[RMDB]
About this RNA
An RNA of 177 nucleotides, treated with 2A3 and DMS and read out base by base. DMS adducts were read by reverse transcription with MarathonRT.
RNA sequence: GGGAACGACUCGAGUAGAGUCGAAAAUGGACUGAUUUCUGAUCCCGCUUCGAUCCGUUGGAUAAUACGAUAAGACAAAUAAUUAGAGCGGUUCCAGUGACUCUGUUUUAACUGGAACUGCCUGGGCAAUCGGUAAACUAUUCGUAGUUUACCGAUUAAAAGAAACAACAACAACAAC
Reactivity to 2A3 in 0.01 (KOAc 150mM, MgCl2 10mM, bicine 150mM(pH8.5), 24C), signal-to-noise 9, nucleotides 027 to 126: u130g040g030a040c050u060g040a120u050u060u030c030u050g050a090u050c000c010c010g000c040u080u100c070g060a060u020c030c020g050u040u070g060g040a060u050a150a040u090a120c040g060a040u050a100a050g090a040c100a050a130a050u230a090a060u220u190a030g010a020g040c010g010g000u000u000c000c000a000g000u010g020a030c020u040c080u290g110u150u130u030u090a040a020c000u000g000g000a000a000c000u000g000c000c000u030g010g030g040c010
Reactivity to DMS in 0.01 (KOAc 150mM, MgCl2 10mM, bicine 150mM(pH8.5), 24C), signal-to-noise 9, nucleotides 027 to 126: u010g010g000a050c100u010g000a070u010u000u000c040u000g010a100u010c010c000c020g010c110u010u010c080g010a040u000c030c030g020u010u000g010g010a100u010a070a080u010a100c080g010a070u010a060a100g000a100c110a070a060a090u030a050a080u020u010a040g000a120g020c000g010g010u000u000c000c000a020g010u000g000a080c140u030c170u020g010u020u010u010u010a160a040c010u000g000g000a010a000c010u000g000c000c000u000g000g010g020c160
Values cover nucleotides 27 to 126. It was measured as part of the RMDB libraries RFM100 and RFMREP.